Annotation:
The record gives the reactivity of an RNA of 177 nucleotides to DMS and 2A3. DMS adducts were read by reverse transcription with MarathonRT. It was measured as part of the RMDB library TTRDES. The RNA was probed in 150 mM KOAc, 10 mM MgCl2 and 150 mM bicine (pH 8.5) at 24 C.
[RMDB]
RNA sequence: GGGAACGACUCGAGUAGAGUCGAAAAGAUAUGGAGUGCCCACGGGAGCGUAGUAUCGGAAACGAUACGAAACGCAUCGAUCGUGGCACUCCUAAGUCAAACGGGUGAUCGUUCGCGAUCACCCGAACCUUGCUGUCAAGUUCGCUUGACAGCAAGGAAAAGAAACAACAACAACAAC
Reactivity to DMS in 0.01 (KOAc 150mM, MgCl2 10mM, bicine 150mM(pH8.5), 24C), signal-to-noise 2, nucleotides 027 to 126: g010a000u000a020u000g000g000a030g050u000g000c170c060c050a020c000g020g030g000a050g040c030g020u000a220g000u000a000u010c010g000g000a020a020a040c020g020a000u000a000c010g050a070a240a110c010g040c000a300u010c200g000a040u000c000g030u000g000g010c010a000c010u000c000c010u000a010a100g000u000c010a050a140a250c040g000g010g010u020g010a040u000c020g040u010u040c200g000c000g000a020u000c000a020c000c000c010g000a020a050
Reactivity to 2A3 in 0.01 (KOAc 150mM, MgCl2 10mM, bicine 150mM(pH8.5), 24C), signal-to-noise 2, nucleotides 027 to 126: g010a010u010a010u040g000g000a000g010u010g020c020c070c040a020c040g030g020g030a130g010c010g030u040a040g000u000a120u000c000g020g000a010a000a000c020g000a020u030a020c000g040a070a060a010c010g000c000a100u300c120g060a050u020c010g000u020g000g000c010a000c000u000c000c000u010a000a000g000u000c020a020a120a130c040g000g000g020u010g000a000u000c020g050u190u070c300g020c020g210a000u020c010a000c010c000c000g010a000a000